[RMDB]
RNA sequence: GGGAACGACUCGAGUAGAGUCGAAAAUACAGCCUGUUGCUGGACUCUGUGAGACACCUGACCGACCGCUGAGCGACUGACUGGUCCACAGCGCCGGCAAGAUGAAGUUCACUGUGGUGGCGGCGGCAGUAUCAUCGAAUUUCGAUUCGAUGAUACUAAAAGAAACAACAACAACAAC
Reactivity to DMS in 0.01 (KOAc 150mM, MgCl2 10mM, bicine 150mM(pH8.5), 24C), signal-to-noise 9, nucleotides 027 to 126: u040a140c160a140g010c020c020u020g010u010u010g010c010u000g000g010a060c030u010c030u000g000u000g010a050g000a100c040a040c050c010u000g000a220c030c020g010a080c260c030g000c010u000g000a120g020c120g010a050c030u010g010a130c250u050g000g010u000c010c030a300c020a010g000c040g020c070c010g000g000c120a040a030g000a050u010g010a090a070g010u010u010c030a050c020u010g020u010g010g010u000g000g010c020g020g000c030g000g000c050
Reactivity to 2A3 in 0.01 (KOAc 150mM, MgCl2 10mM, bicine 150mM(pH8.5), 24C), signal-to-noise 9, nucleotides 027 to 126: u200a010c030a010g030c010c020u160g030u050u050g000c010u030g010g080a110c010u010c010u040g030u020g030a060g020a040c020a050c040c010u080g110a280c010c010g030a050c020c010g000c020u030g020a040g060c100g050a040c010u060g060a100c080u190g050g000u000c010c010a050c000a020g000c010g000c010c010g000g000c020a020a030g020a050u120g060a100a020g050u040u040c020a020c060u050g040u090g040g050u040g020g040c000g000g000c000g000g010c010
Source information
Structure probing data (DMS and 2A3) for a 177-nucleotide construct. For 2A3 the reverse transcriptase was SuperScript II with manganese. Source: RMDB libraries RFM100 and RFMREP, as collected in RNAgym.